RNA sequence: GGGAACGACUCGAGUAGAGUCGAAAAGGAUGGGCUAUAAAUGAUAGGCUACGGGCUGACUCAAUGCUCAGUCGCGUUCUGAGUUUUUCGCGGUGCGACUGAAACGUUUGGACUGGGGGGUGUAUCAUGGGCGACGCGAGUCAAACGCGCUCGGUGCCCCUUUCCUUCUUUUCGAAGAAGGAAAGGGAAAAGAAACAACAACAACAAC
Reactivity to 2A3 in 0.01 (KOAc 150mM, MgCl2 10mM, bicine 150mM(pH8.5), 24C), signal-to-noise 2, nucleotides 027 to 156: g030g000a060u050g050g000g000c080u100a020u070a250a130a040u130g000a070u060a080g040g020c020u040a020c080g020g050g020c020u020g020a030c000u020c150a070a040u120g010c010u030c010a000g010u020c000g000c000g010u110u000c030u040g050a050g100u050u090u050u080u210c070g020c040g000g020u060g000c030g040a030c000u000g000a030a040a010c020g030u050u050u210g020g020a000c060u050g000g000g000g000g040g020u030g020u020a020u110c070a040u090g010g000g000c020g020a020c020g000c040g090a000g040u070c070a080a040a080c070g000c000g030c020u010c020g010g000u020g020c000
Reactivity to DMS in 0.01 (KOAc 150mM, MgCl2 10mM, bicine 150mM(pH8.5), 24C), signal-to-noise 2, nucleotides 027 to 156: g020g030a100u000g030g020g030c040u000a120u000a070a060a150u000g020a170u000a110g010g030c020u000a100c050g040g010g000c010u000g020a110c050u000c060a060a050u000g010c030u000c010a030g020u000c010g010c020g000u000u000c040u000g020a070g030u020u010u000u010u000c000g000c090g040g030u010g000c020g000a010c000u000g010a060a040a020c060g010u000u010u000g020g000a150c040u000g000g000g020g020g040g060u000g030u010a100u000c080a060u010g020g030g000c020g020a020c040g050c000g030a180g000u010c110a060a080a140c080g000c030g010c020u000c030g030g010u010g010c050
Chemical mapping of a 207-nucleotide RNA with 2A3 and DMS.
The RNA was probed in 150 mM KOAc, 10 mM MgCl2 and 150 mM bicine (pH 8.5) at 24 C.
The DMS profile rests on 3,674 reads.